[RMDB]
RNA sequence: GGGAACGACUCGAGUAGAGUCGAAAAGAUAUGGACCGUCCUUGGACCAUCGUAUCGGAAACGAUACCGAUGCUAGGACGUCCUAAGUCAAAACUCAGGGACACGUGUUCGCACGUGUCCCUGAGAAGGACAUUAUGGAGUUCGCUCCAUAAUGUCCAAAAGAAACAACAACAACAAC
Reactivity to 2A3 in 0.01 (KOAc 150mM, MgCl2 10mM, bicine 150mM(pH8.5), 24C), signal-to-noise 2, nucleotides 027 to 126: g030a020u080a070u140g010g010a030c080c300g020u010c000c030u110u190g160g070a250c160c000a000u000c000g010u000a000u000c000g000g030a080a020a010c030g010a000u020a020c010c170g000a000u010g000c020u000a000g000g000a010c030g000u000c000c000u020a090a030g040u000c030a010a000a010a300c020u000c000a020g000g020g010a000c010a020c020g010u020g060u170u180c300g020c220a010c010g000u020g000u000c000c010c000u000g000a010g000a000a000
Reactivity to DMS in 0.01 (KOAc 150mM, MgCl2 10mM, bicine 150mM(pH8.5), 24C), signal-to-noise 2, nucleotides 027 to 126: g040a080u000a300u010g010g000a000c180c160g010u000c000c000u000u000g040g000a140c300c010a000u000c010g010u000a010u000c000g010g000a040a070a220c010g000a020u000a030c120c030g020a010u000g020c020u000a010g000g000a010c010g000u000c000c000u010a020a060g020u010c080a100a070a090a120c010u000c000a010g000g000g000a020c000a010c020g030u000g000u010u010c240g000c020a010c000g000u000g000u000c010c000c000u000g000a000g000a030a070
About this RNA:
Source: RMDB library TTRDEL, as collected in RNAgym. Structure probing data (2A3 and DMS) for a 177-nucleotide construct. 2A3 adducts were read by reverse transcription with SuperScript II with manganese. For 2A3, 3,608 sequencing reads were counted. For DMS the reverse transcriptase was MarathonRT.